[RMDB]
RNA sequence: GGGAACGACUCGAGUAGAGUCGAAAAGAUAUGGAUCGUGACAUUGAGCUGUUGUUGGUCGGAAACGACCAGCCAGCAAUGAUGUGUACGAUCCUAAGUCAAAGUCAUUGGGUUCGCCCAAUGACAAGUUGACCGGAAUGUUCGCAUUCCGGUCAACAAAAGAAACAACAACAACAAC
Reactivity to DMS in 0.01 (KOAc 150mM, MgCl2 10mM, bicine 150mM(pH8.5), 24C), signal-to-noise 1, nucleotides 027 to 126: g000a080u000a300u020g000g000a010u000c000g000u000g000a030c000a020u020u010g000a300g040c020u000g010u000u030g020u000u000g010g010u030c020g000g020a030a070a150c010g020a010c000c000a000g000c000c000a030g040c020a080a120u070g010a010u000g000u000g020u030a020c000g000a030u010c000c010u000a010a090g000u020c010a140a050a110g020u000c000a020u000u000g010g010g010u010u010c300g000c000c000c000a010a010u000g000a000c000a020a050
Reactivity to 2A3 in 0.01 (KOAc 150mM, MgCl2 10mM, bicine 150mM(pH8.5), 24C), signal-to-noise 1, nucleotides 027 to 126: g040a010u090a030u100g000g000a000u000c000g010u010g020a020c000a020u010u130g120a110g080c040u030g000u210u080g010u000u000g020g010u000c010g030g040a010a050a010c000g000a010c000c010a000g000c030c010a000g130c010a020a080u300g000a000u000g060u060g110u090a000c000g000a000u050c000c000u000a050a000g000u000c020a120a050a040g010u000c020a020u000u010g070g000g040u060u080c300g160c090c040c000a010a010u000g010a000c000a020a000

The record gives the reactivity of an RNA of 177 nucleotides to DMS and 2A3. For DMS the reverse transcriptase was MarathonRT. The RNA was probed in 150 mM KOAc, 10 mM MgCl2 and 150 mM bicine (pH 8.5) at 24 C. It was measured as part of the RMDB library TTRDES.